[RMDB]
RNA sequence: GGGAACGACUCGAGUAGAGUCGAAAAAACUCGGUGCCUUUCUGAGACAGAGACUGCCAUACCGUUGGCAGUGGGUCGCCGGCUGUGCCGCGAAUAUAGAGCGACUGCCGUGGUGUAUACAUACUCUCCUUACUUCGCCCGAUUGGGGUCGAUGGCGACUAUCGAGACAUUUCGAUGUCUCGAUAGUAAAAGAAACAACAACAACAAC
Reactivity to 2A3 in 0.01 (KOAc 150mM, MgCl2 10mM, bicine 150mM(pH8.5), 24C), signal-to-noise 4, nucleotides 027 to 156: a000a010c070u060c030g010g000u060g020c020c020u080u140u000c040u120g100a100g030a070c050a030g090a020g030a040c010u020g000c020c010a050u060a210c070c090g080u060u050g000g000c000a010g000u050g010g020g010u030c030g000c060c020g030g010c040u120g070u150g100c040c040g020c040g070a090a010u260a020u090a120g100a030g040c050g050a040c030u030g010c000c000g040u070g000g050u040g020u070a070u030a070c080a030u070a080c020u010c000u040c080c010u040u050a080c020u070u050c050g020c020c020c030g170a180u030u140g020g000g010g010u010c020g060a050u070g040g000c000g010
Reactivity to DMS in 0.01 (KOAc 150mM, MgCl2 10mM, bicine 150mM(pH8.5), 24C), signal-to-noise 2, nucleotides 027 to 156: a060a050c050u010c010g010g000u000g020c000c010u000u000u000c050u020g010a180g000a110c040a080g000a180g000a090c040u000g010c000c010a090u010a140c150c090g020u000u010g010g020c010a030g000u000g000g020g000u000c040g050c040c030g020g020c010u010g040u010g050c020c010g010c030g020a080a110u010a210u010a090g000a300g010c000g010a060c010u000g020c030c030g020u030g020g030u000g030u000a110u000a020c060a150u000a070c020u000c000u000c010c040u010u000a080c050u010u000c030g020c020c020c010g000a140u010u030g000g010g040g030u010c010g010a050u000g020g020c020g010
Description:
The record gives the reactivity of an RNA of 207 nucleotides to 2A3 and DMS. Values cover nucleotides 27 to 156. For DMS the reverse transcriptase was MarathonRT. For 2A3, 2,325 sequencing reads were counted. Conditions: 150 mM KOAc, 10 mM MgCl2 and 150 mM bicine (pH 8.5), 24 C. For DMS, 4,578 sequencing reads were counted.